[RMDB]
RNA sequence: GGGAACGACUCGAGUAGAGUCGAAAAGGAACUGCCGCAAUAUGUUACAUACAAGAUCCGGAGGCUUUCACCAAAAACAACAGAACAAUAUCAACGGAAAUGUAUGGUGGAAGAUUUUGCGAAAACAAUAAUACUCCAGGUUCGCCUGGAGUAUUAUAAAAGAAACAACAACAACAAC
Reactivity to DMS in 0.01 (KOAc 150mM, MgCl2 10mM, bicine 150mM(pH8.5), 24C), signal-to-noise 3, nucleotides 027 to 126: g010g020a140a100c080u010g000c090c050g050c030a030a070u000a040u010g000u010u000a130c090a060u010a100c100a080a110g020a190u000c010c010g010g000a150g020g000c030u000u000u000c030a030c010c020a030a060a080a080a070c080a060a060c110a080g010a090a090c100a040a070u000a100u010c160a050a130c130g000g010a020a090a090u000g010u000a070u010g010g020u010g030g000a040a030g000a100u000u000u000u000g000c030g000a070a080a090a060c170a090
Reactivity to 2A3 in 0.01 (KOAc 150mM, MgCl2 10mM, bicine 150mM(pH8.5), 24C), signal-to-noise 2, nucleotides 027 to 126: g040g000a020a060c050u100g050c040c010g030c000a010a020u080a030u130g090u090u050a040c030a020u150a030c060a060a080g050a190u010c030c030g030g000a040g090g020c000u000u080u040c020a020c020c000a000a020a180a040a100c050a070a010c040a050g110a120a020c040a120a070u120a040u240c060a050a020c030g030g050a140a090a010u030g010u010a030u030g020g050u010g040g030a000a000g000a060u030u030u040u050g010c030g050a040a070a000a040c040a070